[RMDB]
RNA sequence: GGGAACGACUCGAGUAGAGUCGAAAAGGACCGAGACACCAACCAGGCUGCUACGCAAGGCAGCAACAGAGAAUACUACUACAUGAGCGGCAGACUGAUGCAGCGACAAAGUGUGCGGGAUGAAGGCAUUAUUUAUGAAUUUCGAUUCAUAAAUAAUAAAAGAAACAACAACAACAAC
Reactivity to DMS in 0.01 (KOAc 150mM, MgCl2 10mM, bicine 150mM(pH8.5), 24C), signal-to-noise 9, nucleotides 027 to 126: g000g010a080c030c020g010a090g010a070c050a060c040c030a080a100c080c060a090g010g000c010u000g010c010u010a090c140g010c200a100a100g000g000c020a020g010c030a090a070c140a080g010a100g000a120a080u020a070c070u010a070c060u020a070c100a070u020g010a110g010c040g000g000c040a040g010a090c060u010g010a060u020g000c030a040g000c040g000a060c100a050a070a070g010u010g010u010g000c000g000g000g000a050u010g010a060a060g000g010c090
Reactivity to 2A3 in 0.01 (KOAc 150mM, MgCl2 10mM, bicine 150mM(pH8.5), 24C), signal-to-noise 9, nucleotides 027 to 126: g050g010a030c010c040g020a030g010a020c050a010c020c020a050a020c010c000a010g090g000c000u010g000c010u060a050c080g050c130a050a060g070g000c010a000g020c000a020a010c020a020g090a000g050a080a040u090a160c060u020a020c020u030a020c030a100u140g040a010g030c020g020g000c010a010g010a040c020u010g010a030u050g010c010a010g020c010g040a010c040a010a090a020g060u070g020u030g050c010g010g010g000a030u070g050a040a030g040g000c030